[RMDB]
RNA sequence: GGGAACGACUCGAGUAGAGUCGAAAAAGCGGCAACGGGGGUCUGCAGAUAUAUCCGUUCUUGCACGUUGGGUGGGCUACGUUCAACCUCGUGUACUUUGUCUCAUCGACAAACCCAAUAAAAGUGCGUAUUAUCCACCUUUCGAGGUGGAUAAUACAAAAGAAACAACAACAACAAC
Reactivity to 2A3 in 0.01 (KOAc 150mM, MgCl2 10mM, bicine 150mM(pH8.5), 24C), signal-to-noise 7, nucleotides 027 to 126: a000g050c020g030g010c010a060a030c070g010g000g000g000g030u030c030u060g040c060a020g090a030u100a010u040a040u130c020c030g030u050u020c030u050u100g000c010a010c030g070u080u080g050g010g010u120g000g020g010c020u080a030c080g020u030u080c030a040a070c000c010u030c030g010u020g020u050a080c060u030u040u030g020u000c010u000c080a210u100c060g010a020c020a020a060a050c020c000c020a050a040u170a090a120a040a020g090u090g050c050
Reactivity to DMS in 0.01 (KOAc 150mM, MgCl2 10mM, bicine 150mM(pH8.5), 24C), signal-to-noise 3, nucleotides 027 to 126: a130g000c120g010g000c110a130a080c030g010g000g000g000g020u000c030u010g000c080a060g000a090u010a050u030a120u050c100c060g000u010u030c040u010u000g010c020a010c100g010u020u010g020g020g020u030g010g000g000c060u000a050c110g000u000u010c110a030a090c030c000u020c020g000u010g000u000a010c120u000u010u000g000u010c000u010c190a080u000c150g010a060c090a050a040a110c010c030c020a080a060u040a070a060a100a070g000u000g010c180
The record gives the reactivity of an RNA of 177 nucleotides to 2A3 and DMS. The DMS profile rests on 4,586 reads. The RNA was probed in 150 mM KOAc, 10 mM MgCl2 and 150 mM bicine (pH 8.5) at 24 C.